Conditions: 150 mM KOAc, 10 mM MgCl2 and 150 mM bicine (pH 8.5), 24 C. Structure probing data (2A3 and DMS) for a 177-nucleotide construct.

RNA sequence: GGGAACGACUCGAGUAGAGUCGAAAAUUCAUGGCUUUCGUGUGGCUGCUGGCAAUUGAGUGCUUGACAACGGGGCCAGAAGUGUAGUGACAGCAGUCAACGUGGCACUGCCCACCGCAAAACGUUAGCAUUUAGGGUGGUUCGCCACCCUAAAUGCAAAAGAAACAACAACAACAAC
Reactivity to 2A3 in 0.01 (KOAc 150mM, MgCl2 10mM, bicine 150mM(pH8.5), 24C), signal-to-noise 1, nucleotides 027 to 126: u080u050c000a060u070g090g000c010u080u270u120c060g030u270g050u060g150g000c000u000g010c010u010g020g030c040a010a100u110u030g050a130g070u190g090c020u070u090g050a000c000a050a030c110g000g000g000g030c000c010a000g020a030a000g120u100g040u130a070g040u010g030a010c030a000g000c020a000g000u010c020a020a000c000g040u000g040g000c050a030c120u100g000c000c000c000a030c000c060g110c060a090a160a000a030c080g120u220u240a010
Reactivity to DMS in 0.01 (KOAc 150mM, MgCl2 10mM, bicine 150mM(pH8.5), 24C), signal-to-noise 1, nucleotides 027 to 126: u000u000c110a030u040g010g000c000u000u010u010c000g040u010g030u020g010g000c030u020g000c010u020g000g030c040a080a130u000u010g000a210g040u030g030c020u000u010g030a130c130a110a100c080g020g000g020g000c070c040a060g000a020a110g010u010g030u000a030g000u010g000a100c030a010g000c030a000g030u000c030a040a060c180g010u050g000g030c000a100c110u000g000c080c040c010a140c160c030g000c190a050a060a120a090c180g010u000u000a120